Structure probing data (2A3 and DMS) for a 177-nucleotide construct. The reactions ran in a buffer of 150 mM KOAc, 10 mM MgCl2 and 150 mM bicine (pH 8.5), at 24 C. For DMS the reverse transcriptase was MarathonRT. Reactivities are given for positions 27 through 126.
RNA sequence: GGGAACGACUCGAGUAGAGUCGAAAAUCGCAGGGAAAGUGAGUUGGUCUAGGGUACUAAGCUGAAGAUGUUGUGGACUCAGGCGCUUCAGCCCUGUGAGGUUUAACAAAUCACAGCCACCUCUGCACAAAGAUACGUCUUUCGAGACGUAUCUUUGAAAAGAAACAACAACAACAAC
Reactivity to 2A3 in 0.01 (KOAc 150mM, MgCl2 10mM, bicine 150mM(pH8.5), 24C), signal-to-noise 2, nucleotides 027 to 126: u020c040g010c010a020g000g020g020a170a100a080g110u090g010a060g020u120u150g120g040u030c060u120a230g000g000g060u030a050c040u060a030a030g000c000u030g050a120a050g030a150u080g020u110u040g070u060g090g020a030c010u020c070a020g000g020c040g000c030u060u050c030a040g000c000c010c000u040g010u010g010a040g010g000u020u150u100a060a030c040a000a070a010u050c020a020c020a040g000c010c020a010c000c020u000c020u050g010c090a030
Reactivity to DMS in 0.01 (KOAc 150mM, MgCl2 10mM, bicine 150mM(pH8.5), 24C), signal-to-noise 5, nucleotides 027 to 126: u010c080g000c040a030g010g000g000a060a090a100g010u000g010a060g010u000u010g020g010u000c040u000a100g010g000g030u000a040c060u010a100a090g020c010u000g020a080a070g000a060u000g020u000u000g020u010g020g010a100c050u000c020a160g000g010c050g010c020u000u000c090a060g000c000c050c010u000g000u000g000a050g000g020u010u010u000a100a080c120a040a060a070u000c020a060c040a040g000c040c030a060c070c040u000c020u010g010c090a240